[RMDB]
RNA sequence: GGGAACGACUCGAGUAGAGUCGAAAAGCACGUCCGGUAAGCCCCGUGCGAACACUUGAGCUCCGGCUUGACCGCUCUUGUGGAUUAGGACGUUCUAGCUCCGGCUUGGCCGCUAGUUCGUCCGAAACAUAUCGUAUACGUUCGCGUAUACGAUAUGAAAAGAAACAACAACAACAAC
Reactivity to DMS in 0.01 (KOAc 150mM, MgCl2 10mM, bicine 150mM(pH8.5), 24C), signal-to-noise 9, nucleotides 027 to 126: g000c030a040c040g010u030c060c050g000g000u020a110a130g010c010c010c030c050g020u000g010c030g020a100a110c040a030c020u010u010g000a060g010c060u020c200c090g000g000c070u010u020g000a120c060c050g000c020u010c030u000u000g000u000g010g010a170u020u020a110g000g000a010c000g010u000u000c000u000a000g010c040u040c120c040g010g020c090u040u030g010g030c120c100g010c000u000a010g000u000u000c000g010u000c000c000g000a040a060a210
Reactivity to 2A3 in 0.01 (KOAc 150mM, MgCl2 10mM, bicine 150mM(pH8.5), 24C), signal-to-noise 9, nucleotides 027 to 126: g020c010a000c020g030u060c060c030g030g080u110a090a080g060c020c000c010c000g010u020g020c030g030a080a010c020a000c020u020u040g010a010g020c020u070c110c040g060g020c040u180u200g110a260c010c020g000c000u010c000u020u030g020u020g020g040a050u050u160a050g000g000a000c000g000u000u000c000u000a010g000c040u060c100c030g120g050c110u130u300g130g010c030c030g000c010u000a000g010u000u000c000g000u000c000c000g000a010a010a000